[RMDB]
This 207-nucleotide RNA was probed chemically with 2A3 and DMS. The DMS profile rests on 3,035 reads. Source: RMDB library OK3TST, as collected in RNAgym. DMS adducts were read by reverse transcription with MarathonRT. The RNA was probed in 150 mM KOAc, 10 mM MgCl2 and 150 mM bicine (pH 8.5) at 24 C. Values are in units of 0.01, from 0 to 300, in steps of 10.
RNA sequence: GGGAACGACUCGAGUAGAGUCGAAAAUGACAGUUUAGUGGAUACGAUCGUAUUUAGAGGUUGUGAUUUUGGGACUUGGUCAGAUUUGACUAAAGGUUUACAGAGACCGUGGUCAAUUGUGAAACCGAUGGAAGAGUAUGAAGAUGGUAUAGAUGUGCGUAAAUAUCCCGUUCGCGGGAUAUUUACGAAAAGAAACAACAACAACAAC
Reactivity to 2A3 in 0.01 (KOAc 150mM, MgCl2 10mM, bicine 150mM(pH8.5), 24C), signal-to-noise 3, nucleotides 027 to 156: u070g050a030c040a070g030u070u090u160a080g000u100g050g050a030u040a140c060g060a140u120c080g020u050a060u110u140u120a130g020a030g080g000u020u070g030u060g050a090u020u070u080u070g010g000g030a020c030u020u020g010g000u010c010a010g040a270u090u100u060g020a010c010u020a070a100a150g040g000u030u030u060a060c050a000g130a020g010a050c010c030g020u020g000g030u010c020a030a060u090u050g050u000g040a050a020a040c040c030g050a060u040g020g060a010a050g010a030g020u040a020u120g010a000a020g050a050u030g000g020u100a040u080a070g100a040u120g050u050g070
Reactivity to DMS in 0.01 (KOAc 150mM, MgCl2 10mM, bicine 150mM(pH8.5), 24C), signal-to-noise 2, nucleotides 027 to 156: u010g000a060c030a100g000u000u020u000a070g050u000g000g020a130u000a060c080g010a140u000c070g060u010a110u010u000u000a080g000a130g010g030u010u000g000u010g000a110u000u000u010u020g000g000g000a070c090u000u000g030g010u000c010a170g010a180u000u000u010g010a040c030u010a020a080a090g030g010u000u010u000a190c150a170g020a160g010a040c040c020g030u000g000g010u000c030a050a070u000u020g000u000g010a080a000a100c040c000g000a070u010g010g000a080a100g010a120g020u010a050u020g010a030a070g010a080u000g000g000u000a060u000a070g000a080u000g020u000g000